[RMDB]
Notes:
An RNA of 177 nucleotides, treated with DMS and read out base by base. Conditions: 150 mM KOAc, 10 mM MgCl2 and 150 mM bicine (pH 8.5), 24 C. The data come from the RNA Mapping Database (RMDB), library OK2TRN.
RNA sequence: GGGAACGACUCGAGUAGAGUCGAAAACUCGCUUCGGAGGAGCCGUGGUCCGCGCGGGGGAAGCCGAGCCGAGCGGAGCCGCGAGAAGUGCUAGCUCGGGCCGGGAGGAGCCGCAGCCGGAGGAGGGACAACGACAGAGUUUCGACUCUGUCGUUGUAAAAGAAACAACAACAACAAC
Reactivity to DMS in 0.01 (KOAc 150mM, MgCl2 10mM, bicine 150mM(pH8.5), 24C), signal-to-noise 2, nucleotides 027 to 126: c020u000c060g030c060u010u000c050g000g000a160g030g000a110g000c060c040g010u000g020g020u010c020c020g030c150g000c030g020g020g010g000g010a110a260g040c030c010g000a050g010c020c010g030a010g020c000g010g020a070g030c020c070g020c110g010a110g010a110a130g020u020g060c040u000a160g010c010u000c020g000g000g020c030c040g010g000g010a040g000g010a300g010c010c020g000c050a180g010c030c050g040g020a050g000g000a090g010g000g010
The DMS profile rests on 1,702 reads.